[RMDB]
RNA sequence: GGGAACGACUCGAGUAGAGUCGAAAAGAACAGCAUAACGAUAACCCAUGCCGUUGCCAUCAUGGUAAUAUUUAAGAAGAUGUAUCCGAAUUUCAGAUACAUUUCUCUUAUGUAGUUUUUCAAAAGCUGAGGACUCCAGUCCAGCCCAUAGGUAGGACCCUUCUAUCGAAUUCGUUCGAUAGAAGGGAAAAGAAACAACAACAACAAC
Reactivity to DMS in 0.01 (KOAc 150mM, MgCl2 10mM, bicine 150mM(pH8.5), 24C), signal-to-noise 1, nucleotides 027 to 156: g030a100a140c060a150g030c050a050u010a070a160c050g020a190u000a060a160c090c010c010a140u010g030c020c020g000u030u000g020c000c050a130u000c080a150u000g010g000u030a050a140u010a040u010u000u000a030a010g020a040a070g000a000u000g040u000a010u000c000c050g000a060a300u000u000u000c030a030g020a030u010a010c000a040u000u010u010c100u000c020u000u040a010u010g000u000a050g020u000u000u010u020u000c050a070a060a230a300g000c000u000g010a300g010g010a030c010u000c020c030a130g000u000c080c150a090g070c000c010c000a050u000a150g030g000u000a070g010g000a250
Reactivity to 2A3 in 0.01 (KOAc 150mM, MgCl2 10mM, bicine 150mM(pH8.5), 24C), signal-to-noise 3, nucleotides 027 to 156: g050a050a020c010a010g040c010a030u060a140a040c060g020a060u030a060a040c000c000c000a000u020g000c030c030g140u120u120g070c050c030a030u110c020a040u040g000g030u060a150a070u050a120u070u100u020a010a020g010a000a020g000a000u000g000u020a000u000c030c050g110a150a140u200u180u260c050a080g000a000u000a000c000a000u000u010u000c100u000c000u000u010a010u050g020u020a040g030u040u080u030u090u140c040a080a100a010a030g000c010u010g020a050g040g050a060c020u030c070c060a020g030u010c000c010a010g010c010c010c000a030u070a050g110g010u070a020g000g030a020

The record gives the reactivity of an RNA of 207 nucleotides to DMS and 2A3. For DMS, 1,621 sequencing reads were counted. The data come from the RNA Mapping Database (RMDB), library OK3TST. For 2A3, 1,283 sequencing reads were counted. Values are in units of 0.01, from 0 to 300, in steps of 10. 2A3 adducts were read by reverse transcription with SuperScript II with manganese. The RNA was probed in 150 mM KOAc, 10 mM MgCl2 and 150 mM bicine (pH 8.5) at 24 C.